Structure probing data (DMS and 2A3) for a 177-nucleotide construct.

RNA sequence: GGGAACGACUCGAGUAGAGUCGAAAACUGAUGACGUCAUCAGAAUACUCUCACGUCACUAAUCCGUCACGUGUUGGCGCGCAUUGGGUUACUGUAGGCUUUCAGUCGGCGACACCGCACACGGAUAAGCUGAUUAAAAUUUCGAUUUUAAUCAGCUAAAAGAAACAACAACAACAAC
Reactivity to DMS in 0.01 (KOAc 150mM, MgCl2 10mM, bicine 150mM(pH8.5), 24C), signal-to-noise 9, nucleotides 027 to 126: c020u000g010a030u000g010a260c250g010u010c040a050u010c020a030g010a080a100u000a170c220u000c010u000c040a100c160g000u010c090a070c140u010a090a060u000c020c020g000u000c110a140c190g010u000g010u000u010g030g010c020g000c040g000c100a060u000u000g000g000g010u000u000a070c110u000g010u000a110g010g010c070u000u000u010c030a030g010u000c020g000g000c010g010a050c030a030c030c030g010c100a080c150a040c030g010g000a030u000a090
Reactivity to 2A3 in 0.01 (KOAc 150mM, MgCl2 10mM, bicine 150mM(pH8.5), 24C), signal-to-noise 9, nucleotides 027 to 126: c010u010g000a020u020g060a100c200g160u290c070a010u010c000a010g080a070a050u130a110c030u020c010u010c040a030c060g150u060c060a040c170u120a090a020u020c000c010g020u020c050a020c110g030u040g060u070u110g160g010c030g000c010g010c070a040u040u100g070g020g040u070u070a090c090u190g170u280a110g040g130c030u040u150u170c020a020g020u030c020g020g020c000g030a030c010a010c010c030g020c010a020c000a000c020g000g000a010u010a010

The data come from the RNA Mapping Database (RMDB), library OK2TST. The reactions ran in a buffer of 150 mM KOAc, 10 mM MgCl2 and 150 mM bicine (pH 8.5), at 24 C. 2A3 adducts were read by reverse transcription with SuperScript II with manganese.